[RMDB]
RNA sequence: GGGAACGACUCGAGUAGAGUCGAAAACUCAGCAUAUCCGUUACAUAGAGGCGAGCAUUGAGAUGCAUGCGCAGAUGAGCGCCGUGAAUACGCUGAUCAGCAUUCUUGGUUUCAUCCCCAAGGUCCUACUCAGUAGCAUAUUCGUAUGCUACUGAGUAAAAGAAACAACAACAACAAC
Reactivity to 2A3 in 0.01 (KOAc 150mM, MgCl2 10mM, bicine 150mM(pH8.5), 24C), signal-to-noise 9, nucleotides 027 to 126: c010u010c010a020g010c020a040u040a050u140c030c030g080u100u120a080c030a060u190a100g120a060g100g020c020g020a020g020c020a040u050u140g090a140g020a110u080g040c040a030u140g060c040g000c070a030g050a120u070g040a040g030c010g000c000c030g070u080g070a040a030u130a050c040g000c020u020g020a070u080c030a010g030c020a050u060u060c010u020u030g050g000u030u070u090c040a060u060c020c010c000c000a020a020g040g010u030c000c000u000
Reactivity to DMS in 0.01 (KOAc 150mM, MgCl2 10mM, bicine 150mM(pH8.5), 24C), signal-to-noise 5, nucleotides 027 to 126: c090u000c020a070g000c050a070u010a040u010c020c020g020u020u000a120c160a140u030a070g000a090g010g010c010g010a090g010c000a030u000u000g000a110g020a100u010g010c080a040u040g000c070g020c060a110g010a050u000g010a050g000c030g020c040c050g010u020g000a080a050u020a070c060g010c020u000g000a040u020c090a100g000c100a060u010u010c010u000u010g000g010u000u020u010c150a050u030c080c060c010c030a030a060g000g010u010c040c030u020

Structure probing data (2A3 and DMS) for a 177-nucleotide construct. The data come from the RNA Mapping Database (RMDB), library OK1LIB. The reactions ran in a buffer of 150 mM KOAc, 10 mM MgCl2 and 150 mM bicine (pH 8.5), at 24 C. 2A3 adducts were read by reverse transcription with SuperScript II with manganese.